Overview
Source: RMDB library OK2TST, as collected in RNAgym. Structure probing data (2A3 and DMS) for a 177-nucleotide construct. Values cover nucleotides 27 to 126. For DMS, 8,722 sequencing reads were counted. Conditions: 150 mM KOAc, 10 mM MgCl2 and 150 mM bicine (pH 8.5), 24 C.
RNA sequence: GGGAACGACUCGAGUAGAGUCGAAAAGUGACUGCUUAGUCUUUGACACCAGCAUUGCACAGCUUUUUGCAGAAAAUGGCAAUUUAGGCAUCAAUGUAACUAUUUCCAUGUGUUGAAAUGGCAAUCACUCGUACGUUAAUUUCGAUUAACGUACGAGAAAAGAAACAACAACAACAAC
Reactivity to 2A3 in 0.01 (KOAc 150mM, MgCl2 10mM, bicine 150mM(pH8.5), 24C), signal-to-noise 2, nucleotides 027 to 126: g060u040g010a060c030u020g050c040u170u160a030g040u160c000u030u030u070g030a010c020a020c000c020a000g050c010a020u010u040g020c120a080c020a100g000c050u050u070u020u040u030g030c040a020g160a150a130a070a090u140g050g000c000a010a050u030u100u120a110g010g030c000a020u000c010a020a040u040g030u050a040a060c030u010a090u060u050u000c050c030a070u110g050u020g040u060u060g030a090a090a090u080g000g000c020a030a040u050c020a020
Reactivity to DMS in 0.01 (KOAc 150mM, MgCl2 10mM, bicine 150mM(pH8.5), 24C), signal-to-noise 6, nucleotides 027 to 126: g030u010g000a050c040u000g010c050u000u010a090g010u010c070u000u000u010g010a050c030a050c070c150a120g010c040a040u010u000g000c150a070c130a120g020c040u000u000u010u010u010g010c040a090g000a060a050a100a100u010g000g000c030a030a030u000u000u000a060g010g010c020a120u010c030a030a030u000g000u000a080a110c100u000a110u000u000u000c030c050a080u010g000u000g010u000u000g000a010a050a090u000g010g010c060a030a040u010c060a100